[RMDB]
RNA sequence: GGGAACGACUCGAGUAGAGUCGAAAAAGAGAGCAAGCACUGGAAGCACAGCGCCAUUCAUCGUCAUGGAGACAGAUACUUUUCCAAGGUCGAUGCCUUCAAAAAGUUGGCGCAUAUCCAAAAUUGACCUGAAGGUAAAAUUCGUUUUACCUUCAGGAAAAGAAACAACAACAACAAC
Reactivity to 2A3 in 0.01 (KOAc 150mM, MgCl2 10mM, bicine 150mM(pH8.5), 24C), signal-to-noise 7, nucleotides 027 to 126: a000g090a000g020a010g010c030a060a000g010c010a030c120u050g020g030a050a020g040c050a040c050a110g000c010g000c010c010a030u060u060c010a010u020c010g030u000c000a030u040g040g000a020g010a030c050a050g180a120u220a220c060u040u050u040u010c010c000a030a060g060g000u030c010g010a010u020g030c000c030u160u190c110a070a070a050a060a080g060u050u020g010g000c000g000c020a000u040a010u010c010c000a020a050a040a140u110u120g050a040
Reactivity to DMS in 0.01 (KOAc 150mM, MgCl2 10mM, bicine 150mM(pH8.5), 24C), signal-to-noise 8, nucleotides 027 to 126: a060g000a110g010a070g000c050a060a050g010c060a100c110u010g010g010a090a130g010c100a080c160a110g010c030g000c010c010a040u000u010c050a030u000c040g010u000c060a120u000g000g000a070g010a040c230a080g010a150u010a080c120u000u010u010u000c070c060a050a080g010g010u000c030g010a050u000g010c300c070u000u000c110a050a070a070a040a070g010u000u000g020g010c010g020c010a070u000a050u000c050c040a040a050a050a120u000u010g000a210